[RMDB]
RNA sequence: GGGAACGACUCGAGUAGAGUCGAAAAUAGCUGCUCAUGGUGAUGCGUGCCUGUAGUCCCAGCUACCUGGGAGGCUGAGGGAGGAGUAUCUCUUGAGCCUGGGAGGCAGAGGUUACAGUGACCCAAGAUCACGCCACUGCAUUGCAGCCUGGGCAACCACUCUGUAAAAGUUCGCUUUUACAGAGUGAAAAGAAACAACAACAACAAC
Reactivity to 2A3 in 0.01 (KOAc 150mM, MgCl2 10mM, bicine 150mM(pH8.5), 24C), signal-to-noise 5, nucleotides 027 to 156: u120a020g010c020u020g010c010u030c060a070u240g020g020u080g060a160u090g050c020g030u040g020c010c020u020g020u100a050g060u090c010c000c000a010g000c030u110a180c030c020u040g030g060g050a030g010g000c030u020g020a060g010g040g010a050g070g030a110g110u150a120u030c030u000c000u030u050g120a010g000c000c010u010g040g010g020a050g070g000c020a010g030a060g080g000u050u070a060c030a060g010u030g090a040c010c050c040a040a040g050a100u060c020a000c050g020c010c010a040c040u040g000c020a090u040u300g020c010a000g000c000c000u030g000g010g010c000a020a000c010
Reactivity to DMS in 0.01 (KOAc 150mM, MgCl2 10mM, bicine 150mM(pH8.5), 24C), signal-to-noise 2, nucleotides 027 to 156: u000a100g010c010u010g050c020u000c030a080u010g020g020u010g000a080u010g010c050g040u000g000c060c020u070g000u000a050g010u010c000c000c010a080g000c020u000a080c050c030u020g030g020g010a030g010g020c010u010g010a110g000g010g010a080g020g020a180g020u000a050u000c000u010c010u010u000g020a080g000c010c020u000g020g030g010a210g010g000c030a100g030a120g040g010u000u010a040c040a080g010u000g000a040c010c080c050a070a200g000a120u000c070a090c010g030c010c000a050c010u020g010c000a120u000u000g000c000a180g020c020c000u020g010g030g010c020a050a060c030